This 207-nucleotide RNA was probed chemically with DMS and 2A3. 2A3 adducts were read by reverse transcription with SuperScript II with manganese. It was measured as part of the RMDB library PDB130.
RNA sequence: GGGAACGACUCGAGUAGAGUCGAAAAGGACCUACUUGAUCAAAAGAGUGGGAAAACCCCGGAAUCACGUAGACCCACUUGGGACCGAGUAUUGCAAUUAUUGGUCGCGCAACGAGGAAUGUCUCGUAGGCGCAGCUCAUCAAACUGUGCCGAUUACCAACGCUGACUAGUUCGCUAGUCAGCGUUGAAAAGAAACAACAACAACAAC
Reactivity to DMS in 0.01 (KOAc 150mM, MgCl2 10mM, bicine 150mM(pH8.5), 24C), signal-to-noise 1, nucleotides 027 to 156: g000g000a090c000c010u000a020c000u000u000g050a020u000c050a220a160a120a300g000a040g030u000g030g000g020a110a050a090a110c040c040c000c000g020g020a090a200u000c100a020c030g010u000a130g000a300c000c040c000a060c070u000u030g000g010g010a110c020c000g000a090g000u000a090u000u020g050c000a060a100u000u000a160u000u000g000g000u000c000g080c040g000c150a120a020c010g020a040g040g010a050a120u000g010u000c000u010c010g090u000a180g000g010c000g040c000a000g000c020u020c080a140u000c220a160a000a030c030u000g030u000g000c010c000g010a130u000u000a030c090
Reactivity to 2A3 in 0.01 (KOAc 150mM, MgCl2 10mM, bicine 150mM(pH8.5), 24C), signal-to-noise 2, nucleotides 027 to 156: g030g000a000c000c000u000a000c000u030u030g020a000u110c060a000a020a160a130g070a050g000u060g020g000g000a040a080a070a000c010c010c020c040g090g100a190a130u230c100a020c100g010u020a050g040a120c000c000c000a020c060u020u050g070g040g000a000c020c000g030a020g080u040a120u110u260g070c090a110a010u070u020a060u040u170g020g000u040c010g030c050g000c120a030a050c050g040a020g010g110a220a100u150g050u010c000u020c020g030u070a120g030g000c020g000c000a000g000c070u120c100a230u110c060a100a080a030c000u030g010u010g000c000c000g010a030u080u000a050c010
The reactions ran in a buffer of 150 mM KOAc, 10 mM MgCl2 and 150 mM bicine (pH 8.5), at 24 C.
Reactivities are given for positions 27 through 156.